[RMDB]
RNA sequence: GGGAACGACUCGAGUAGAGUCGAAAAGGCAGACUAUCCGGAUCUGGUGCCGCGGCUACGGUUCGGCGACAUCGUGCGGGUGGGGUCAGCCGAUGAGCACCUGCAGAGCACAUGGUGUUCGGGCAUCGUCGAGUCGUCAAUUCGUUGACGACUCGACAAAAGAAACAACAACAACAAC
Reactivity to DMS in 0.01 (KOAc 150mM, MgCl2 10mM, bicine 150mM(pH8.5), 24C), signal-to-noise 1, nucleotides 027 to 126: g020g020c010a060g000a120c070u020a100u000c000c000g000g010a080u000c060u080g000g000u000g080c000c060g000c010g000g010c030u000a170c140g000g000u000u010c060g030g080c020g020a040c000a000u000c010g020u000g000c130g010g000g000u030g000g000g000g050u000c040a170g020c000c000g010a090u070g000a080g010c100a010c000c000u010g000c050a220g000a200g030c160a090c000a140u030g030g090u000g040u000u000c000g000g000g010c070a160u000c070
Reactivity to 2A3 in 0.01 (KOAc 150mM, MgCl2 10mM, bicine 150mM(pH8.5), 24C), signal-to-noise 2, nucleotides 027 to 126: g020g000c010a000g030a080c000u040a070u020c000c000g000g050a110u030c050u200g000g000u020g010c000c000g010c010g010g000c000u080a050c170g060g000u060u210c060g230g000c000g020a000c000a030u040c040g020u070g060c010g000g030g020u070g010g090g000g030u000c040a030g000c000c000g020a090u130g030a000g000c000a010c030c030u060g000c070a030g030a010g160c070a050c030a170u150g050g000u000g000u030u020c000g000g040g020c070a120u130c080

Chemical mapping of a 177-nucleotide RNA with DMS and 2A3. Reactivities are given for positions 27 through 126. The data come from the RNA Mapping Database (RMDB), library OK1LIB.